[RMDB]
The data come from the RNA Mapping Database (RMDB), library M2RFPK. Structure probing data (2A3 and DMS) for a 207-nucleotide construct. The RNA was probed in 150 mM KOAc, 10 mM MgCl2 and 150 mM bicine (pH 8.5) at 24 C. For 2A3 the reverse transcriptase was SuperScript II with manganese. The DMS profile rests on 1,775 reads. For DMS the reverse transcriptase was MarathonRT.
RNA sequence: GGGAACGACUCGAGUAGAGUCGAAAAAACUCUUUAAGGCAAUAACGAACUAAUUCUAAGCAAGUAAUGGAGAAAUGCCAGGGUCACUAUCUAGCCAUAAUAGUGCUUGUCAGUAUGAUACUAACUGAAUAUGGUAAACCGUUCGCGGUUUACCAAAUCUUAUCCAACACUUCGGUGUUGGAUAAGAAAAAGAAACAACAACAACAAC
Reactivity to 2A3 in 0.01 (KOAc 150mM, MgCl2 10mM, bicine 150mM(pH8.5), 24C), signal-to-noise 2, nucleotides 027 to 156: a000a000c150u190c000u050u140u050a080a010g030g000c000a080a160u120a110a040c040g040a030a030c060u030a100a060u110u010c060u090a050a000g070c030a040a000g050u120a150a040u090g030g040a100g080a120a110a000u080g050c040c050a020g010g010g020u040c000a000c000u000a020u090c030u050a060g040c000c000a000u010a230a020u030a030g060u050g060c130u000u060g050u030c000a000g040u070a080u090g050a020u140a190c040u040a090a090c000u070g010a020a090u100a110u150g000g000u000a000a000a000c000c000g030u070u050c150g000c020g110g000u000u000u000a000c000c000a000a000a000
Reactivity to DMS in 0.01 (KOAc 150mM, MgCl2 10mM, bicine 150mM(pH8.5), 24C), signal-to-noise 1, nucleotides 027 to 156: a060a060c000u000c010u010u010u000a020a090g020g050c010a080a160u000a060a130c030g000a080a160c050u010a070a120u000u010c030u010a060a100g000c030a120a150g020u000a060a070u000g000g000a090g030a090a080a080u000g000c030c000a070g020g020g040u020c020a070c120u000a040u000c020u000a050g010c040c010a090u010a040a050u010a050g010u010g010c120u000u010g000u000c030a070g010u000a090u000g000a100u000a060c140u000a050a140c040u000g000a060a120u000a160u010g050g000u000a000a000a000c020c000g040u010u000c300g060c050g000g020u020u000u000a010c000c000a020a010a040